[RMDB]
RNA sequence: GGGAACGACUCGAGUAGAGUCGAAAAUAGCUGGGUUGACGUUUGGCGUUGACGUUUCGCAGGUUGACAAAGCGGUACGAUCACUCGCAGAACUGAAAAACCAAAGCCAGCAAACGGGCGCUGGCCUACAGUCACUUGCGGACGCUGAAAGGCGGGCUAGAUAAACAAUGUUCGCAUUGUUUAUCUAAAAAGAAACAACAACAACAAC
Reactivity to 2A3 in 0.01 (KOAc 150mM, MgCl2 10mM, bicine 150mM(pH8.5), 24C), signal-to-noise 2, nucleotides 027 to 156: u180a000g020c010u050g010g010g000u020u060g030a030c050g010u020u020u130g040g010c030g000u010u040g030a050c030g010u010u080u100c010g000c020a010g010g010u130u190g030a040c020a000a120a010g030c040g010g000u040a030c060g030a130u050c020a010c130u070c030g000c030a040g020a040a030c030u090g070a150a030a000a000a000c060c030a080a010a000g010c010c000a000g000c000a090a170a090c100g010g080g030c070g010c030u030g000g000c000c000u080a080c050a020g010u000c010a010c040u030u020g020c010g010g020a030c020g020c010u050g040a120a070a020g030g020c030g010g010g000c010
Reactivity to DMS in 0.01 (KOAc 150mM, MgCl2 10mM, bicine 150mM(pH8.5), 24C), signal-to-noise 1, nucleotides 027 to 156: u020a060g000c000u000g000g020g020u000u000g000a060c050g030u010u000u000g010g040c020g020u000u000g040a030c030g030u000u000u000c000g060c000a020g010g030u010u010g020a110c100a030a100a100g000c030g020g030u000a070c010g000a100u020c030a090c080u000c020g000c030a140g020a080a130c040u000g000a050a050a070a060a090c040c030a070a140a090g000c000c010a000g030c000a040a100a150c120g000g000g060c070g010c020u000g010g000c000c010u000a070c070a110g020u000c020a040c020u000u010g010c050g000g010a060c010g030c020u000g000a050a050a180g030g000c010g020g020g000c050
The record gives the reactivity of an RNA of 207 nucleotides to 2A3 and DMS. The DMS profile rests on 2,590 reads. The RNA was probed in 150 mM KOAc, 10 mM MgCl2 and 150 mM bicine (pH 8.5) at 24 C. Values are in units of 0.01, from 0 to 300, in steps of 10. Values cover nucleotides 27 to 156.